[RMDB]
RNA sequence: GGGAACGACUCGAGUAGAGUCGAAAAGAUAUGGAGUGUCUACCCACCUGCCGCCAAUCGAAGAACGAAUAAAGAUCGGAAACGAUCUUUAUUCGGGAGAUUGGUGGCAGAGGACACUCCUAAGUCACUAUUUAUAGUCGUUCGCGACUAUAAAUAGAAAAGAAACAACAACAACAAC
Reactivity to 2A3 in 0.01 (KOAc 150mM, MgCl2 10mM, bicine 150mM(pH8.5), 24C), signal-to-noise 2, nucleotides 027 to 126: g170a110u240a300u300g000g000a000g000u000g000u010c020u090a300c000c000c040a020c010c000u010g000c010c000g000c030c020a000a010u030c020g200a300a070g040a170a030c010g000a000a000u010a010a020a000g000a010u000c010g000g000a060a060a030c000g010a000u020c000u010u000u010a010u010u020c000g000g000g000a080g000a000u020u000g010g040u010g000g000c010a000g010a000g000g000a010c000a000c000u000c000c000u000a010a010g160u060c070a020
Reactivity to DMS in 0.01 (KOAc 150mM, MgCl2 10mM, bicine 150mM(pH8.5), 24C), signal-to-noise 3, nucleotides 027 to 126: g030a110u020a170u020g010g000a020g020u000g010u010c000u010a170c050c040c050a300c130c000u000g000c000c000g000c000c000a000a000u000c000g000a140a120g030a120a220c020g000a010a000u000a000a010a020g010a020u000c000g000g010a080a120a270c010g020a000u000c000u000u000u000a000u000u000c000g000g000g000a070g000a020u000u000g000g010u000g000g000c000a000g000a030g000g000a010c010a010c000u000c010c000u000a010a070g010u030c060a240

An RNA of 177 nucleotides, treated with 2A3 and DMS and read out base by base. In probing experiments dimethyl sulfate is read out at A N1 and C N3, which are open when not base-paired. The reactions ran in a buffer of 150 mM KOAc, 10 mM MgCl2 and 150 mM bicine (pH 8.5), at 24 C. Source: RMDB library TTRINS, as collected in RNAgym. For 2A3, 5,215 sequencing reads were counted.